The record gives the reactivity of an RNA of 177 nucleotides to DMS and 2A3. The DMS profile rests on 1,090 reads. DMS adducts were read by reverse transcription with MarathonRT. Conditions: 150 mM KOAc, 10 mM MgCl2 and 150 mM bicine (pH 8.5), 24 C.
[RMDB]
RNA sequence: GGGAACGACUCGAGUAGAGUCGAAAAGCUGAAAGCUUCGGCUUUCAGCAAAGAAAAAGAUGUACAGCUUCUAAGGUACAUCAAGAAUUGAAGCGAAAAGAAAAAGCUUAACGUUCGCGUUAAGCAAGUACAGCUAACAGUUCGCUGUUAGCUGUACAAAAGAAACAACAACAACAAC
Reactivity to DMS in 0.01 (KOAc 150mM, MgCl2 10mM, bicine 150mM(pH8.5), 24C), signal-to-noise 2, nucleotides 027 to 126: g020c000u000g010a000a010a000g000c010u000u040c260g010g000c000u010u000u000c000a000g000c010a010a060a120g020a050a070a180a090a240g010a010u000g000u000a000c010a200g000c030u000u000c030u010a070a090g070g000u000a010c010a010u000c000a110a070g000a210a130u010u000g000a000a040g050c020g020a110a140a080a120g000a070a070a050a100a090g010c000u000u000a010a000c010g000u000u010c250g070c010g000u000u010a000a020g010c000a010a030
Reactivity to 2A3 in 0.01 (KOAc 150mM, MgCl2 10mM, bicine 150mM(pH8.5), 24C), signal-to-noise 3, nucleotides 027 to 126: g020c010u010g000a000a000a000g000c020u070u090c200g070g000c000u010u010u010c000a000g010c000a010a070a010g090a010a130a010a010a010g020a010u010g000u010a000c020a030g030c060u060u060c070u140a070a040g040g000u000a000c000a000u010c010a000a030g090a080a090u160u120g030a030a000g040c060g060a000a030a070a080g160a040a090a020a030a000g000c000u000u000a000a000c010g020u020u050c290g000c000g080u010u000a000a000g000c020a000a000